[RMDB]
RNA sequence: GGGAACGACUCGAGUAGAGUCGAAAAGGUCUCCCAGCGGAUGGCGGGACCCCACUCUACAGGGUUUCGCGUUCCAUCCUUUCUUACCUGGUGGCCGGCAUGGUCCCAGCCUCCUCGCUGGCGCCGGACAUCGAUAAGCCUUCGGGCUUAUCGAUGUAAAAGAAACAACAACAACAAC
Reactivity to DMS in 0.01 (KOAc 150mM, MgCl2 10mM, bicine 150mM(pH8.5), 24C), signal-to-noise 1, nucleotides 027 to 126: g010g010u020c090u010c020c010c000a130g000c240g010g010a030u010g000g000c050g000g000g050a020c050c010c010c070a090c140u020c110u000a060c140a170g000g000g020u000u000u000c060g000c030g000u010u010c140c010a090u000c020c050u000u010u010c070u010u000a100c110c050u000g000g010u010g020g020c040c030g030g050c050a130u010g020g000u010c100c000c040a060g040c020c070u010c020c030u020c130g000c030u000g000g010c080g030c010c010g000g000